This 177-nucleotide RNA was probed chemically with DMS and 2A3.
RNA sequence: GGGAACGACUCGAGUAGAGUCGAAAAGAUAUGGACCUUCUCGAGAACUCGAACUACAGGCUCGGAAACGAGACCUGCGAGUUCUAAGACAGGAAGGUCCUAAGUCAAAGCAACGUUCGCGUUGCAAGCCUCAUUGUAGCUUCGGCUACAAUGAGGCAAAAGAAACAACAACAACAAC
Reactivity to DMS in 0.01 (KOAc 150mM, MgCl2 10mM, bicine 150mM(pH8.5), 24C), signal-to-noise 1, nucleotides 027 to 126: g010a020u020a300u000g010g000a020c000c000u000u000c000u000c010g000a120g000a010a000c000u000c030g000a080a000c110u000a300c010a010g020g000c000u010c030g000g010a020a090a300c010g000a030g000a110c000c000u000g000c000g000a010g000u000u020c020u010a070a050g000a030c300a140g010g000a010a000g000g030u000c000c000u000a020a020g000u000c080a090a140a060g000c000a000a000c000g000u000u000c220g000c010g030u000u000g000c020a010a170
Reactivity to 2A3 in 0.01 (KOAc 150mM, MgCl2 10mM, bicine 150mM(pH8.5), 24C), signal-to-noise 1, nucleotides 027 to 126: g060a000u110a070u120g000g070a000c000c000u020u000c090u030c060g110a020g010a000a000c000u000c000g030a070a030c080u120a040c260a000g000g020c000u000c010g060g110a090a090a030c020g050a010g300a300c000c000u010g000c030g000a000g010u040u000c000u020a050a000g040a020c100a040g040g040a010a000g000g000u020c000c000u000a070a040g030u000c040a040a040a100g000c000a000a010c000g080u190u260c300g040c020g110u000u000g000c000a000a030

It was measured as part of the RMDB library TTRDEL.
The 2A3 profile rests on 1,985 reads.
The reactions ran in a buffer of 150 mM KOAc, 10 mM MgCl2 and 150 mM bicine (pH 8.5), at 24 C.
The DMS profile rests on 883 reads.